[RMDB]
RNA sequence: GGGAACGACUCGAGUAGAGUCGAAAAGAUAUGGACCGAGUUAGCUUUUGACGCUCGAUCACUCGGAAACGAGUGCAGAGAGCGAUAAGCUAACCGGUCCUAAGUCAAAGCUCAGUUCGCUGAGCAACCUAACUCUAGGCUUCGGCCUAGAGUUAGGAAAAGAAACAACAACAACAAC
Reactivity to 2A3 in 0.01 (KOAc 150mM, MgCl2 10mM, bicine 150mM(pH8.5), 24C), signal-to-noise 1, nucleotides 027 to 126: g050a000u100a010u170g000g000a000c030c000g090a080g140u000u000a000g000c000u020u070u100u300g270a150c060g000c010u000c000g040a080u030c000a000c000u040c000g040g010a010a050a010c030g000a000g000u040g000c130a030g120a010g000a000g060c000g000a020u010a000a000g000c000u000a000a000c020c000g000g020u000c000c000u010a000a010g000u010c040a090a050a020g000c010u000c000a010g010u090u140c260g000c170u000g000a020g020c020a000a020
Reactivity to DMS in 0.01 (KOAc 150mM, MgCl2 10mM, bicine 150mM(pH8.5), 24C), signal-to-noise 2, nucleotides 027 to 126: g030a130u000a300u000g000g010a000c000c010g010a220g000u000u010a010g000c000u000u000u000u000g000a300c080g100c000u000c000g000a300u000c010a020c010u010c010g020g010a080a090a290c020g000a050g010u000g000c300a010g030a300g040a000g020c000g010a030u000a010a020g010c020u000a000a000c000c000g000g000u000c000c000u000a000a030g020u000c040a090a180a080g010c000u000c000a000g030u000u020c300g030c030u030g000a000g010c020a050a040